[RMDB]
RNA sequence: GGGAACGACUCGAGUAGAGUCGAAAAGCUGAAAAGCGAAGGGUCGAGUUGUUGAAAAAUGACCUGAGAGCAUGAGGCGAGACCCGUAGCGCAGGGCAAAACUUCCACGGGCAACUGUGGGACGGCUCACAAGGUUGGUGUUCGCACCAACCUUGUGAAAAGAAACAACAACAACAAC
Reactivity to DMS in 0.01 (KOAc 150mM, MgCl2 10mM, bicine 150mM(pH8.5), 24C), signal-to-noise 1, nucleotides 027 to 126: g000c080u050g000a160a090a120a100g000c000g000a110a200g000g000g110u000c000g010a170g000u000u000g000u000u000g000a010a110a090a160a000u090g070a110c000c000u000g070a050g000a300g040c000a060u000g000a300g020g000c000g000a030g030a010c060c000c000g000u000a080g000c020g000c010a060g000g000g020c010a000a000a000a050c300u000u000c050c000a020c000g010g000g010c300a140a100c000u000g000u010g000g000g000a100c280g000g070c000u000